[RMDB]
RNA sequence: GGGAACGACUCGAGUAGAGUCGAAAAACUUCUUUUCUGACUCCGUUAAGGAUUAGAGGUUAACCCCAACGGAUGCUUUGUUUGGCUCUUCUCUAGUUAGCUAAACAAUCAAGACUCAGACUAGAGCAUCCCACCAUCAGGGAUAAUCGAUGGUCCCCAUUGUCUAAUCGUUCGCGAUUAGACAAUGAAAAGAAACAACAACAACAAC
Reactivity to DMS in 0.01 (KOAc 150mM, MgCl2 10mM, bicine 150mM(pH8.5), 24C), signal-to-noise 2, nucleotides 027 to 156: a050c020u000u000c010u010u000u000u000c000u000g030a160c030u000c030c010g020u000u000a180a300g020g010a040u000u000a020g010a120g040g030u010u010a110a100c040c010c020c080a080a060c040g010g030a010u000g010c000u010u000u000g020u010u010u000g020g000c020u000c010u000u000c020u000c050u010a060g020u010u010a080g000c020u000a020a020a020c000a030a030u000c070a120a300g010a110c130u010c140a070g020a030c010u000a060g010a020g000c300a160u000c010c010c010a090c000c040a020u010c030a080g030g010g000a120u000a020a070u010c040g010a070u000g020g000u000c010c050c020
Reactivity to 2A3 in 0.01 (KOAc 150mM, MgCl2 10mM, bicine 150mM(pH8.5), 24C), signal-to-noise 8, nucleotides 027 to 156: a000c010u020u000c000u010u010u010u000c010u060g020a020c020u000c010c010g020u020u040a040a020g020g000a010u010u020a020g010a020g050g020u150u170a110a100c040c020c020c050a000a010c000g010g000a010u020g020c010u030u010u010g000u000u010u010g010g000c000u010c010u110u030c020u010c010u010a020g030u040u040a000g000c010u020a010a010a010c010a010a010u030c030a030a020g090a140c090u110c290a020g010a030c010u020a000g000a000g020c020a110u070c000c010c020a100c000c000a020u000c010a010g020g000g050a120u220a120a070u190c130g000a000u020g000g020u010c010c000c000